[RMDB]
RNA sequence: GGGAACGACUCGAGUAGAGUCGAAAAGAUAUGGAGCGAUUUGUGGGAGCUGAUGGUCGGAAACGACCAUACAGCAUCGAUCACAUGUCGCUCCUAAGUCAAACAGUAAAAAGUUCGCUUUUUACUGCCUCAAGAGGUACUUCGGUACCUCUUGAGGAAAAGAAACAACAACAACAAC
Reactivity to DMS in 0.01 (KOAc 150mM, MgCl2 10mM, bicine 150mM(pH8.5), 24C), signal-to-noise 1, nucleotides 027 to 126: g000a000u000a150u050g000g000a030g010c000g000a040u000u000u010g010u010g020g030g010a100g060c000u000g000a010u000g000g000u000c000g030g000a050a030a050c010g010a000c000c000a010u000a030c020a000g010c000a110u000c200g030a110u020c030a020c010a000u000g000u000c000g000c000u000c000c000u000a020a030g000u020c030a130a100a300c000a000g010u000a000a000a000a020a010g000u000u030c300g050c000u000u000u000u000u010a000c000u000g000
Reactivity to 2A3 in 0.01 (KOAc 150mM, MgCl2 10mM, bicine 150mM(pH8.5), 24C), signal-to-noise 1, nucleotides 027 to 126: g040a040u030a000u080g000g000a000g000c000g000a010u020u020u000g040u030g020g090g240a080g020c000u000g010a000u010g010g000u050c000g020g000a040a000a000c000g030a020c020c030a020u050a050c010a010g000c010a010u180c150g070a180u170c000a000c000a000u000g000u000c000g000c000u000c000c000u010a010a000g000u000c000a020a080a170c010a000g000u000a000a020a020a010a010g030u050u110c300g120c190u050u040u000u000u000a000c020u040g110